[RMDB]
RNA sequence: GGGAACGACUCGAGUAGAGUCGAAAAGCUUUAUGUUCGCAUAAAGCAAAACCUGAUUCGUCAGGAUGAUAUGUGGGUGAAUACAGUCACUCGAAUCGAAACAAACGAUGAUCCUUCGGGAUCAUCGACCCAUGUUAUCCUUCGGGAUAACAUGGGUAAAAGAAACAACAACAACAAC
Reactivity to 2A3 in 0.01 (KOAc 150mM, MgCl2 10mM, bicine 150mM(pH8.5), 24C), signal-to-noise 4, nucleotides 027 to 126: g000c010u020u000u000a010u040g030u040u100c260g000c090a000u000a000a020a000g000c010a040a020a010a050c010c000u000g010a030u000u070c100g060u040c070a010g060g050a100u110g060a020u100a120u230g170u160g020g050g050u080g050a060a020u240a150c070a080g210u030c000a000c020u020c010g020a040a070u070c060g020a050a040a070c050a060a070a020c020g010a000u040g000a000u000c010c000u020u060c220g050g010g000a000u020c000a000u000c000g000
Reactivity to DMS in 0.01 (KOAc 150mM, MgCl2 10mM, bicine 150mM(pH8.5), 24C), signal-to-noise 2, nucleotides 027 to 126: g030c000u000u010u000a000u000g010u000u010c210g040c000a000u000a000a010a010g000c000a050a030a130a150c000c010u000g000a010u010u000c150g030u000c050a120g000g000a130u000g000a040u000a040u000g020u020g040g010g030u000g010a110a090u010a070c230a100g010u000c010a010c010u000c000g000a050a030u000c010g010a120a110a100c170a030a070a170c040g010a010u000g010a000u000c000c000u000u000c150g020g000g030a000u000c000a000u000c020g000